[RMDB]
RNA sequence: GGGAACGACUCGAGUAGAGUCGAAAAGUGUGCUAUACUAGUAAGGUUGAAUGAAUCAACCCUUGGUGCUUAGCUUCUUUCACCAAGCAUAUUACACGCGGAUAACCGCCAAAGGAGAAAAGACGAACUGCCCGACGAUUCUUCGGAAUCGUCGGAAGGUAUCAGGUCAGUUCGCUGACCUGAUACCAAAAGAAACAACAACAACAAC
Reactivity to 2A3 in 0.01 (KOAc 150mM, MgCl2 10mM, bicine 150mM(pH8.5), 24C), signal-to-noise 1, nucleotides 027 to 156: g050u060g010u010g000c030u060a030u050a230c120u050a080g120u100a100a100g070g000u020u090g010a160a170u200g030a070a090u100c000a000a000c000c000c000u000u000g070g000u030g000c030u040u110a050g030c020u040u040c010u020u170u020c030a030c050c000a050a000g050c040a030u010a050u140u040a070c050a040c140g010c000g000g000a050u040a300a180c000c010g000c070c040a030a000a000g020g010a050g070a050a100a050a000g030a010c040g020a060a060c050u050g060c020c020c000g000a000c000g000a000u000u000c010u000u050c140g040g000a000a000u000c000g010u000c010g000g000a000a010